[RMDB]
RNA sequence: GGGAACGACUCGAGUAGAGUCGAAAAGUAGGGGGGCGUGCCGAUGGCGCAGAAGCCUGAGGCGUAAGCUCGGGUGGAGCCGUCGGUAACGAAUAUCCUGGCGGUAGUAGCAGCAUAGUCGGGUGAGUACCAUGCUGAGGUUCGCCUCAGCAUGGUAAAAAGAAACAACAACAACAAC
Reactivity to 2A3 in 0.01 (KOAc 150mM, MgCl2 10mM, bicine 150mM(pH8.5), 24C), signal-to-noise 1, nucleotides 027 to 126: g160u120a040g000g010g000g010g020g000c000g000u010g030c000c010g000a000u040g000g000c070g030c160a020g030a040a020g000c000c000u010g010a010g090g010c010g000u100a070a010g000c000u000c000g000g000g040u030g020g010a090g000c000c000g000u000c000g010g000u010a080a030c000g030a030a000u010a020u150c000c000u040g010g000c020g040g000u040a050g020u010a050g080c050a080g000c000a090u010a150g010u020c010g010g000g030u040g030a060g020
Reactivity to DMS in 0.01 (KOAc 150mM, MgCl2 10mM, bicine 150mM(pH8.5), 24C), signal-to-noise 2, nucleotides 027 to 126: g000u040a060g000g000g010g000g000g000c080g010u000g000c050c010g000a060u000g010g040c000g000c160a110g010a200a160g010c010c000u010g000a090g000g000c070g040u020a070a150g020c020u000c000g000g000g010u010g010g000a190g000c010c010g030u000c000g030g010u000a010a010c010g000a110a070u010a150u030c010c000u010g000g000c030g000g000u010a050g010u010a120g060c050a110g000c130a080u020a080g010u020c040g050g010g010u010g000a130g000